[RMDB]
RNA sequence: GGGAACGACUCGAGUAGAGUCGAAAAGCGAUGUACACGCAGUGCGGCCAAUGACCUCUGCACUUGUAAUACGUUAAUAUGUAUAAACAGAUUACGUGGCAUACCUGUAAGGAAGGCCAUCACGUGCCCAUAAUUGAUCAUUCGUGAUCAAUUAUGGAAAAGAAACAACAACAACAAC
Reactivity to DMS in 0.01 (KOAc 150mM, MgCl2 10mM, bicine 150mM(pH8.5), 24C), signal-to-noise 9, nucleotides 027 to 126: g020c050g000a090u000g020u000a100c090a100c080g000c050a100g010u000g020c150g010g000c070c070a100a090u010g010a080c040c020u000c060u010g010c220a020c040u000u000g020u010a070a210u010a020c020g010u000u010a040a050u010a050u010g000u000a120u010a080a080a060c030a060g000a050u000u000a010c030g010u000g000g010c210a060u000a070c030c030u000g010u010a070a150g010g010a100a090g000g010c020c010a050u000c080a050c070g010u000g010c100
Reactivity to 2A3 in 0.01 (KOAc 150mM, MgCl2 10mM, bicine 150mM(pH8.5), 24C), signal-to-noise 9, nucleotides 027 to 126: g030c030g050a070u110g040u150a040c050a010c100g010c040a020g020u020g060c020g030g000c020c030a080a150u150g070a110c010c020u040c050u050g000c020a010c000u020u030g020u030a070a040u050a090c010g020u020u080a070a030u100a080u140g060u030a120u090a190a230a010c010a010g060a080u070u090a020c020g010u020g020g000c010a020u070a120c010c010u090g070u160a060a030g050g040a050a060g030g000c010c000a010u060c020a020c060g050u060g030c010